Chemical mapping of a 177-nucleotide RNA with DMS and 2A3. The 2A3 profile rests on 13,175 reads. For DMS, 16,458 sequencing reads were counted. Source: RMDB library M2PK90, as collected in RNAgym. The RNA was probed in 150 mM KOAc, 10 mM MgCl2 and 150 mM bicine (pH 8.5) at 24 C.
RNA sequence: GGGAACGACUCGAGUAGAGUCGAAAAUGAUUGAGCGUAGCACACACUCAGACUCUACGACAGUCUGACACACACCUACGCUAGUGCAUCGUGUGUGUGAUAUCGAUGUAGCACGAAAAUGAAGUAACCCACAAAGAUAAUUCGUUAUCUUUGUGGGAAAAGAAACAACAACAACAAC
Reactivity to DMS in 0.01 (KOAc 150mM, MgCl2 10mM, bicine 150mM(pH8.5), 24C), signal-to-noise 9, nucleotides 027 to 126: u010g010a150u010u010g010a060g020c020g020u000a080g020c120a090c130a100c030a080c090u000c030a090g000a010c000u000c040u000a040c110g010a300c300a010g000u000c000u000g010a110c050a040c050a040c070a030c070c080u000a040c050g000c040u000a060g020u010g020c020a090u000c050g020u000g000u000g010u000g010u000g010a120u010a060u000c060g000a060u010g020u000a080g010c030a050c050g000a060a050a070a090u010g010a080a120g010u010a080a180
Reactivity to 2A3 in 0.01 (KOAc 150mM, MgCl2 10mM, bicine 150mM(pH8.5), 24C), signal-to-noise 7, nucleotides 027 to 126: u220g040a100u140u100g030a010g040c040g020u080a010g050c110a020c020a000c000a000c100u020c010a000g000a010c000u000c020u080a040c040g050a010c000a000g000u000c010u010g020a000c000a000c000a000c010a000c020c030u110a030c040g010c020u040a050g080u030g080c000a020u030c030g010u010g000u010g010u000g010u010g080a080u060a040u180c080g020a040u070g070u150a040g040c030a000c060g060a080a050a030a080u270g060a070a040g040u010a060a080